[RMDB]
RNA sequence: GGGAACGACUCGAGUAGAGUCGAAAAAGGAGGGAUAGCGCCAUGAGCAUGACAAAGUCUAUGUUUGAGUUAAUCUCAACAAAAUCAAUCCAGUCAUCAGUGGCGCUAUCUAUCCUGAGUUCUAUGGCCUGCUAACCUAGUUCGCUAGGUUAGCAGGAAAAGAAACAACAACAACAAC
Reactivity to DMS in 0.01 (KOAc 150mM, MgCl2 10mM, bicine 150mM(pH8.5), 24C), signal-to-noise 2, nucleotides 027 to 126: a020g000g000a030g000g000g010a010u000a000g010c000g020c000c000a050u000g000a130g060c120a020u000g000a000c000a020a120a210g000u010c060u020a050u030g000u040u010u000g000a020g000u000u070a110a210u050c000u030c000a000a000c020a000a110a070a090u020c100a010a190u040c130c150a300g060u020c000a000u000c020a210g000u000g000g010c000g000c000u000a000u010c000u000a030u000c000c020u020g000a140g020u020u000c000u020a080u000g000g000
Reactivity to 2A3 in 0.01 (KOAc 150mM, MgCl2 10mM, bicine 150mM(pH8.5), 24C), signal-to-noise 5, nucleotides 027 to 126: a020g010g010a020g000g050g000a010u010a000g000c000g000c010c020a030u040g070a030g070c170a010u020g000a000c030a040a150a010g060u070c100u140a130u090g080u030u110u110g000a010g010u070u260a160a190u110c000u000c000a000a000c020a000a080a030a050u170c120a030a030u070c060c090a030g000u000c010a000u000c000a000g010u000g000g000c000g010c000u000a000u000c000u000a000u000c000c010u000g000a070g020u010u000c040u040a090u130g180g040
Notes:
Structure probing data (DMS and 2A3) for a 177-nucleotide construct. The reactions ran in a buffer of 150 mM KOAc, 10 mM MgCl2 and 150 mM bicine (pH 8.5), at 24 C. 2A3 adducts were read by reverse transcription with SuperScript II with manganese.